[RMDB]
RNA sequence: GGGAACGACUCGAGUAGAGUCGAAAAUCCUCUUGUUUCAGCAGGCAUAUUUGGUGUAAAACCAGCUGUGUCUUUUGAUUAUCUUAUUAGGGAGGCUAAGACUAGAGUUUUAGUCGUCGUUAAUUCCAAACUAGGGCCUUCGGGCCCUAGAAAAGAAACAACAACAACAAC
Reactivity to 2A3 in 0.01 (KOAc 150mM, MgCl2 10mM, bicine 150mM(pH8.5), 24C), signal-to-noise 1, nucleotides 027 to 129: u000c000c000u000c140u110u040g240u150u030u000c090a210g000c010a040g050g000c000a000u020a000u050u130u130g000g000u010g030u220a080a100a000a010c060c000a210g080c000u000g020u000g020u000c050u000u000u000u000g010a080u020u100a230u090c050u180u000a000u000u200a000g000g040g000a000g000g000c000u070a000a000g010a000c050u090a290g120a040g090u030u030u030u030a000g000u000c050g220u000c000g110u000u040a000a000u210u000c000c000a010a010a010
Reactivity to DMS in 0.01 (KOAc 150mM, MgCl2 10mM, bicine 150mM(pH8.5), 24C), signal-to-noise 1, nucleotides 027 to 129: u020c010c010u000c090u120u000g000u000u010u000c060a090g040c130a030g000g060c020a020u020a020u000u050u000g000g070u000g000u030a000a140a130a000c000c000a060g060c000u000g030u000g000u000c000u030u010u000u000g000a090u000u090a000u010c170u070u020a070u100u000a030g030g000g030a080g020g020c030u010a080a030g030a070c000u000a090g000a170g000u050u000u000u000a000g030u000c000g020u030c000g030u120u000a000a140u010u000c050c150a050a060a170